[RMDB]
RNA sequence: GGGAACGACUCGAGUAGAGUCGAAAAGAUCAUGCCUUCGCCGGCGAUGAUCUCGGUGGCGGCGCCGAUAACGAUGUCGACGCCGGGCUGGAUGUCCGGGUUGCCGGCCUUGCCGAUGGCGGCGAUGGUCCAAGCGGUAUUUCGAUACCGCUUGGACAAAAGAAACAACAACAACAAC
Reactivity to 2A3 in 0.01 (KOAc 150mM, MgCl2 10mM, bicine 150mM(pH8.5), 24C), signal-to-noise 3, nucleotides 027 to 126: g020a010u030c020a000u050g000c020c010u030u080c070g060c050c010g010g030c020g040a020u050g000a000u000c040u010c000g020g010u050g060g070c000g000g030c000g000c000c020g030a040u090a190a070c120g090a100u230g000u040c000g000a010c010g020c000c030g010g020g000c010u040g060g080a110u120g080u050c020c000g030g000g000u070u130g080c010c000g000g030c000c000u030u100g020c000c020g160a150u140g040g050c000g000g010c030g010a030u110g110
Reactivity to DMS in 0.01 (KOAc 150mM, MgCl2 10mM, bicine 150mM(pH8.5), 24C), signal-to-noise 1, nucleotides 027 to 126: g000a050u000c000a030u020g000c000c030u010u010c170g020c120c050g020g020c010g000a050u000g020a030u000c000u000c050g000g000u000g020g000c040g010g000c060g030c040c000g000a180u040a210a180c170g000a100u060g000u000c030g000a070c010g020c000c000g010g010g000c010u030g010g030a160u010g010u040c000c030g010g050g000u020u020g000c000c010g000g010c050c060u030u010g010c000c000g010a090u030g000g000c020g000g020c000g000a070u020g000